[RMDB]
RNA sequence: GGGAACGACUCGAGUAGAGUCGAAAACCUGGUUUAUUCGUAAACCAGGAUAGGCCGUAGCGCGGUGGACCCACCUGACCCCAUGCCGAACUCAGAAGUGAAUAUUCCAGACCUUCGGGUCUGGAAAUCGUAUGUAAGUUUUCGAACUUACAUACGAAAAAGAAACAACAACAACAAC
Reactivity to 2A3 in 0.01 (KOAc 150mM, MgCl2 10mM, bicine 150mM(pH8.5), 24C), signal-to-noise 4, nucleotides 027 to 126: c000c000u000g000g020u030u010u000a070u060u060c150g030u030a010a010a000c000c000a000g000g010a020u090a050g040g020c030c010g050u060a010g040c070g000c020g060g020u030g040g040a060c010c000c010a030c010c010u010g070a070c030c000c010c010a030u090g020c020c010g040a050a030c010u010c060a060g010a160a020g100u100g110a090a030u110a110u150u030c000c000a000g000a010c010c010u030u090c220g090g010g000u000c000u000g000g020a000a000a000
Reactivity to DMS in 0.01 (KOAc 150mM, MgCl2 10mM, bicine 150mM(pH8.5), 24C), signal-to-noise 8, nucleotides 027 to 126: c000c000u000g010g000u000u000u000a010u000u010c160g020u000a010a010a010c000c010a020g000g010a060u000a050g000g010c020c030g020u000a090g010c090g010c040g000g010u000g000g000a100c060c030c030a090c060c030u000g000a110c040c020c010c030a100u010g020c040c030g000a070a100c070u000c050a060g010a110a110g010u010g000a100a090u000a150u000u000c000c000a000g000a010c000c000u000u010c220g040g010g010u000c000u000g000g000a000a010a020
An RNA of 177 nucleotides, treated with 2A3 and DMS and read out base by base. Values are in units of 0.01, from 0 to 300, in steps of 10. For 2A3, 6,294 sequencing reads were counted. Source: RMDB library M2PK50, as collected in RNAgym. The reactions ran in a buffer of 150 mM KOAc, 10 mM MgCl2 and 150 mM bicine (pH 8.5), at 24 C.